The data come from the RNA Mapping Database (RMDB), library TTRINS.
The record gives the reactivity of an RNA of 177 nucleotides to DMS.
The RNA was probed in 150 mM KOAc, 10 mM MgCl2 and 150 mM bicine (pH 8.5) at 24 C.
DMS adducts were read by reverse transcription with MarathonRT.

[RMDB]
RNA sequence: GGGAACGACUCGAGUAGAGUCGAAAAGAUAUGGACCUGCCUACGGACGGAUGCUACUGAGGAGAUUCGGAAACGAAUCUCUACCCACCAGUAGAACUACAUCUGGUCCGUAGGCAGGUCCUAAGUCGAUCAUAAUUUGCUUCGGCAAAUUAUGAUCAAAAGAAACAACAACAACAAC
Reactivity to DMS in 0.01 (KOAc 150mM, MgCl2 10mM, bicine 150mM(pH8.5), 24C), signal-to-noise 2, nucleotides 027 to 126: g010a080u020a300u010g010g040a000c000c000u000g000c000c010u000a000c000g000g010a010c000g010g010a000u000g020c020u000a000c000u010g000a140g000g000a010g000a010u000u020c020g040g000a110a120a250c010g000a000a000u020c000u000c010u000a020c010c040c090a300c120c000a020g000u010a010g000a030a010c040u040a300c010a000u000c000u030g000g010u000c000c000g010u010a000g000g030c000a000g000g000u000c000c010u000a000a070g020u000c090